This 177-nucleotide RNA was probed chemically with DMS.
Reactivities are given for positions 27 through 126.
The data come from the RNA Mapping Database (RMDB), library TTRINS.
For DMS the reverse transcriptase was MarathonRT.

[RMDB]
RNA sequence: GGGAACGACUCGAGUAGAGUCGAAAAGAUAUGGAUUACCGAAUCUAAGAUCUAGUUGUAGACGAUCACUCGGAAACGAGUGGUCGUCGCAGAUAACUAGAGUCUUAGAUUCGGUAAUCCUAAGUCACAUGUUACCUACGUUCGCGUAGGUAACAUGAAAAGAAACAACAACAACAAC
Reactivity to DMS in 0.01 (KOAc 150mM, MgCl2 10mM, bicine 150mM(pH8.5), 24C), signal-to-noise 2, nucleotides 027 to 126: g000a040u050a300u020g010g000a010u000u000a000c000c010g000a040a010u000c000u000a000a000g020a250u000c000u000a010g010u000u000g030u000a100g020a050c020g010a000u010c000a000c000u000c000g000g000a140a160a280c010g020a030g000u000g020g000u000c010g020u000c000g030c180a100g040a060u010a020a010c000u000a000g000a010g010u010c000u000u000a000g010a010u000u000c000g020g000u000a000a010u000c000c000u000a040a050g020u000c020a270